[RMDB]
RNA sequence: GGGAACGACUCGAGUAGAGUCGAAAAGAAAACGAAACCAAACAGGAGCAAGCUGCGAAACAAACGCAGCAAAGAGAGCACGGGGAAGCUCUCACCCCGAGGUCGAAAGACCAGCUCCUGCAAACAAGUGUCGAUCACUCUUCGGAGUGAUCGACACAAAAGAAACAACAACAACAAC
Reactivity to 2A3 in 0.01 (KOAc 150mM, MgCl2 10mM, bicine 150mM(pH8.5), 24C), signal-to-noise 1, nucleotides 027 to 126: g090a010a040a000a040c070g140a080a040a010c000c050a050a120a000c010a010g000g010a010g040c040a040a060g010c050u060g000c000g010a270a000a030c120a060a060a000c010g000c000a000g000c000a000a020a000g020a000g000a000g030c070a030c050g020g000g030g000a070a000g040c000u020c000u000c000a100c010c000c000c030g010a020g000g000u000c000g010a090a030a030g000a000c020c000a000g010c000u040c000c000u000g000c010a120a060a060c060a140a050